[RMDB]
RNA sequence: GGGAACGACUCGAGUAGAGUCGAAAACUCGGCAAAAGGCGGCAGUCCUCAGUACUCUUACUCUUUCCUAUAAAGAGGAGACUGCUGGACUCGCCGCCCGAGCCCGAGCAUGGGCCCCAGUUCCGAAAUCCUUCAGUGUUCGCACUGAAGAAAAGAAACAACAACAACAAC
Reactivity to 2A3 in 0.01 (KOAc 150mM, MgCl2 10mM, bicine 150mM(pH8.5), 24C), signal-to-noise 9, nucleotides 027 to 129: c000u000c000g000g000c020a100a120a020a060g000g000c000g000g010c000a000g000u000c000c000u010c000a030g010u190a300c030u000c010u050u200a260c010u010c010u030u080u050c050c080u180a180u230a300a020a010g000a000g000g000a000g000a000c010u010g050c060u000g000g000a000c000u010c040g000c000c000g000c000c000c000g000a000g000c010c020c000g000a000g000c050a100u160g040g060g020c000c000c000c000a030g030u080u020c020c020g050a040a070a090u050c020
Reactivity to DMS in 0.01 (KOAc 150mM, MgCl2 10mM, bicine 150mM(pH8.5), 24C), signal-to-noise 9, nucleotides 027 to 129: c020u010c010g000g000c000a050a070a200a130g020g000c010g020g040c000a030g000u020c000c000u020c020a000g000u050a170c030u000c040u050u110a300c010u020c020u010u010u010c220c170u050a110u070a090a000a000g000a000g040g000a000g000a060c010u000g000c150u020g000g000a020c020u020c160g060c000c010g020c000c000c060g000a160g000c120c040c060g000a000g010c040a010u000g000g000g000c050c040c020c040a140g020u070u020c010c010g000a090a100a090u090c090